Background
This 207-nucleotide RNA was probed chemically with 2A3. The RNA was probed in 150 mM KOAc, 10 mM MgCl2 and 150 mM bicine (pH 8.5) at 24 C.

[RMDB]
RNA sequence: GGGAACGACUCGAGUAGAGUCGAAAAUGGCAGGACAUAACCCUGACUUCUGUUAUGUUUCACCUCUUUCAGAACUCUUUUCAUCUUGUAAGCAUAUAAGAUAAAUUUGUCUUAUGUUUAGAAAUAUAGUGUUAGGAAUAGCAUCAUUGAAAAGAAAUCGUAAUUAGCGGUUCGCCGCUAAUUACGAAAAAGAAACAACAACAACAAC
Reactivity to 2A3 in 0.01 (KOAc 150mM, MgCl2 10mM, bicine 150mM(pH8.5), 24C), signal-to-noise 1, nucleotides 027 to 156: u070g010g000c040a010g000g010a030c010a070u110a030a020c020c000c000u080g110a110c030u050u070c050u130g040u030u060a070u070g000u000u100u040c050a120c010c000u060c040u100u100u040c050a060g040a150a170c050u000c000u040u030u020u020c040a100u030c010u060u170g040u110a010a010g000c010a000u110a010u010a170a030g000a000u050a150a300a270u170u130u130g000u000c010u000u000a010u020g010u000u030u060a050g040a020a010a010u160a020u060a100g010u010g040u080u010a010g030g060a050a100u030a070g010c030a010u080c010a010u030u080g030a020a030a010a020g060a020a140a050